[RMDB]
RNA sequence: GGGAACGACUCGAGUAGAGUCGAAAAUUAAAGGAGGAGGAGAAUUCCAGCGCGCGCUCGGUCCUCCCACGCGCGGCGCGCGCUGCAAUUCGCGCGCGGAGGAUGAUUAAUAGAUAGCGCGCAAAAAACUAAGAGUAUCCUUCGGGAUACUCUUAGUAAAAGAAACAACAACAACAAC
Reactivity to DMS in 0.01 (KOAc 150mM, MgCl2 10mM, bicine 150mM(pH8.5), 24C), signal-to-noise 1, nucleotides 027 to 126: u010u010a090a100a100g010g010a040g010g010a080g000g040a180g000a100a030u000u000c200c010a050g000c040g020c000g010c010g000c020u010c040g010g010u020c040c010u000c030c010c070a010c130g000c110g000c150g010g000c060g030c030g010c030g020c030u020g000c080a040a070u000u010c010g050c010g000c000g030c240g020g010a140g010g000a050u000g010a150u000u000a090a100u000a130g010a130u010a120g010c000g000c000g010c010a000a010a060a080a040
Chemical mapping of a 177-nucleotide RNA with DMS. Values cover nucleotides 27 to 126. The data come from the RNA Mapping Database (RMDB), library M2PK90. The reactions ran in a buffer of 150 mM KOAc, 10 mM MgCl2 and 150 mM bicine (pH 8.5), at 24 C.